RNA sequence: GGGAACGACUCGAGUAGAGUCGAAAAGAUAUGGAGACCAACUUUUGACGUUUGCGGUUCGGAAACGAACCGGCAAACGAUAAGUUGCUCCUAAGUCAAAAGAACUGGCCGUUCGCGGCCAGUUCAAGACGUAUAGUUGGUUCGCCAACUAUACGUCAAAAGAAACAACAACAACAAC
Reactivity to 2A3 in 0.01 (KOAc 150mM, MgCl2 10mM, bicine 150mM(pH8.5), 24C), signal-to-noise 2, nucleotides 027 to 126: g000a020u080a010u100g030g010a000g030a090c190c100a020a020c010u130u070u080u200g260a100c060g020u000u000u000g030c030g000g020u000u000c010g050g000a030a040a020c000g000a010a030c000c030g010g000c010a000a000a000c000g030a000u000a000a010g000u000u010g000c000u030c000c000u010a190a030g040u020c030a040a000a000a260g030a040a000c010u020g010g010c030c000g040u080u070c300g020c040g160g040c060c020a000g010u010u000c000a000a000
Reactivity to DMS in 0.01 (KOAc 150mM, MgCl2 10mM, bicine 150mM(pH8.5), 24C), signal-to-noise 2, nucleotides 027 to 126: g010a030u010a300u010g010g000a010g010a130c200c010a000a000c000u000u000u000u000g030a190c040g010u010u000u000g000c000g030g020u000u000c000g010g000a120a070a160c000g010a020a000c010c000g020g030c000a000a000a010c000g010a060u000a010a020g020u000u000g000c010u010c000c000u010a040a150g010u010c020a050a070a130a160g010a010a010c000u000g000g020c000c010g020u000u020c210g030c000g010g010c010c010a000g000u000u000c000a030a090